[RMDB]
Structure probing data (2A3 and DMS) for a 177-nucleotide construct. For 2A3 the reverse transcriptase was SuperScript II with manganese. Values cover nucleotides 27 to 126. The RNA was probed in 150 mM KOAc, 10 mM MgCl2 and 150 mM bicine (pH 8.5) at 24 C. Source: RMDB library TTRINS, as collected in RNAgym. The 2A3 profile rests on 7,290 reads.
RNA sequence: GGGAACGACUCGAGUAGAGUCGAAAAGAUAUGGAUUAUGCUAAUCCUGCUGUCAUUGUCAGAUUAUGGAUCGGAAACGAUCCUAAGAUCUUGGAUUUAUGACAGCAGGACAACAUAAUCCUAAGUCGUUAUCUCAAUGGUUCGCCAUUGAGAUAACAAAAGAAACAACAACAACAAC
Reactivity to 2A3 in 0.01 (KOAc 150mM, MgCl2 10mM, bicine 150mM(pH8.5), 24C), signal-to-noise 3, nucleotides 027 to 126: g110a020u160a110u280g000g010a010u000u000a000u000g030c080u150a190a120u020c000c000u000g000c000u000g000u000c000a010u000u040g020u010c010a020g010a040u020u020a050u230g010g000a000u000c000g030g000a060a070a070c030g000a010u000c000c010u000a080a020g030a010u010c000u050u240g300g020a080u300u300u180a040u060g000a000c000a000g000c000a010g000g000a000c000a010a020c000a000u010a000a010u010c020c000u020a130a020g100u070c090
Reactivity to DMS in 0.01 (KOAc 150mM, MgCl2 10mM, bicine 150mM(pH8.5), 24C), signal-to-noise 3, nucleotides 027 to 126: g020a110u030a300u050g000g010a000u000u000a010u000g010c010u010a300a300u000c000c000u010g000c000u000g000u000c000a000u000u010g000u000c020a020g010a020u030u000a300u000g000g010a010u000c000g000g000a180a120a280c010g030a010u000c000c000u000a030a110g000a010u000c010u000u010g050g020a000u010u000u000a000u010g000a010c000a000g010c000a000g000g000a000c050a060a110c000a000u000a020a010u000c000c000u000a110a120g010u010c140